[RMDB]
RNA sequence: GGGAACGACUCGAGUAGAGUCGAAAAGAUAUGGAGCCUACGACGCGAUAAGCUAGCAUCGGAAACGAUGUUUAGCUUUUGACGCGUGGUAGGCUCCUAAGUCAAAACUUCGAGUUCGCUCGAAGAACUUAGCCCUAACGUUCGCGUUAGGGCUAAGAAAAGAAACAACAACAACAAC
Reactivity to DMS in 0.01 (KOAc 150mM, MgCl2 10mM, bicine 150mM(pH8.5), 24C), signal-to-noise 1, nucleotides 027 to 126: g000a030u000a220u000g000g010a020g000c000c000u000a000c010g000a030c010g000c000g030a260u000a030a030g010c000u000a000g010c000a000u000c010g010g010a080a050a120c000g010a010u000g010u000u020u000a010g000c000u000u000u000u000g020a180c150g000c020g040u000g000g030u000a020g000g010c000u010c010c000u000a000a080g010u010c040a090a060a160a200c010u020u000c010g000a030g010u010u000c260g010c010u010c000g000a020a010g020a150a130
Reactivity to 2A3 in 0.01 (KOAc 150mM, MgCl2 10mM, bicine 150mM(pH8.5), 24C), signal-to-noise 1, nucleotides 027 to 126: g000a000u040a000u040g020g010a000g010c040c010u030a010c010g300a000c000g140c060g130a090u100a300a030g010c000u000a000g020c050a000u000c000g000g050a030a020a000c050g000a000u020g010u020u300u110a000g000c010u010u000u000u100g090a040c060g000c000g000u060g010g000u010a000g000g000c000u010c000c000u000a000a000g000u000c000a000a000a040a100c030u010u020c010g000a000g020u130u090c140g140c050u010c000g000a010a010g010a000a000